[RMDB]
An RNA of 177 nucleotides, treated with DMS and 2A3 and read out base by base. 2A3 adducts were read by reverse transcription with SuperScript II with manganese. Source: RMDB library OK2TRN, as collected in RNAgym. Conditions: 150 mM KOAc, 10 mM MgCl2 and 150 mM bicine (pH 8.5), 24 C.
RNA sequence: GGGAACGACUCGAGUAGAGUCGAAAAGGAUCACGAGGGGGAGACCCCGGCAACCUGGGAGGGACACCCAAGGUGCUCACACCGGAGACGGUGGAUCCGGCCCGAGAGGGCAACGAAGGUCCUAACAACCAGGAUAUAUAUUCGUAUAUAUCCUGGUAAAAGAAACAACAACAACAAC
Reactivity to DMS in 0.01 (KOAc 150mM, MgCl2 10mM, bicine 150mM(pH8.5), 24C), signal-to-noise 9, nucleotides 027 to 126: g010g010a020u000c010a160c220g020a110g020g000g020g010g000a240g000a270c010c000c000c000g000g000c020a030a040c010c010u000g000g000g010a080g000g010g000a080c100a120c000c000c010a020a030g010g000u000g000c010u000c100a300c010a040c010c010g000g010a270g000a170c020g020g010u000g000g000a030u000c010c020g010g000c010c000c000g000a170g000a160g000g010g010c010a040a050c140g000a110a090g010g000u000c000c000u000a100a110c210a110
Reactivity to 2A3 in 0.01 (KOAc 150mM, MgCl2 10mM, bicine 150mM(pH8.5), 24C), signal-to-noise 3, nucleotides 027 to 126: g000g000a010u020c020a010c150g080a120g000g000g000g010g000a060g030a040c000c000c000c000g010g000c000a020a050c000c000u000g000g000g000a110g020g040g020a020c040a280c090c010c010a010a020g010g010u010g000c000u030c020a060c000a000c010c000g020g000a040g020a030c010g010g000u010g000g010a020u000c000c000g020g000c000c000c000g000a020g000a010g010g010g000c010a040a010c060g100a070a030g040g010u000c000c010u040a140a050c050a030